An RNA of 177 nucleotides, treated with 2A3 and DMS and read out base by base. Values cover nucleotides 27 to 126. For DMS the reverse transcriptase was MarathonRT. The RNA was probed in 150 mM KOAc, 10 mM MgCl2 and 150 mM bicine (pH 8.5) at 24 C.
RNA sequence: GGGAACGACUCGAGUAGAGUCGAAAAGAUAUGGAUCCUUCACAGGACUAUGAAGUGGCUCGGAAACGAGCCAUGGAGUCCGUGACUGGGAUCCUAAGUCAAACUAAUACCGUUCGCGGUAUUAGAAGUUACACUAAGUCUUCGGACUUAGUGUAACAAAAGAAACAACAACAACAAC
Reactivity to 2A3 in 0.01 (KOAc 150mM, MgCl2 10mM, bicine 150mM(pH8.5), 24C), signal-to-noise 2, nucleotides 027 to 126: g000a000u050a020u090g000g010a000u000c000c010u030u010c020a030c110a210g130g000a030c030u100a300u300g020a030a000g020u010g020g000c020u010c000g000g000a070a050a010c010g000a000g000c010c010a000u010g000g000a000g010u000c010c020g010u010g000a040c190u110g050g000g000a000u000c000c000u000a040a000g010u020c030a000a000a180c000u000a000a000u000a010c030c000g000u030u110c300g020c030g100g000u000a000u000u000a000g000a040a030
Reactivity to DMS in 0.01 (KOAc 150mM, MgCl2 10mM, bicine 150mM(pH8.5), 24C), signal-to-noise 3, nucleotides 027 to 126: g010a040u010a280u010g000g010a020u000c000c000u010u000c000a010c020a280g070g000a010c000u000a220u020g000a130a230g010u000g000g020c000u000c000g000g010a100a050a240c000g020a020g000c000c000a000u000g020g000a030g030u000c010c160g030u000g010a020c300u020g010g010g000a000u000c010c000u000a010a100g000u000c030a140a140a300c010u000a000a000u010a010c000c000g020u000u010c300g050c010g020g000u000a000u000u000a000g000a060a070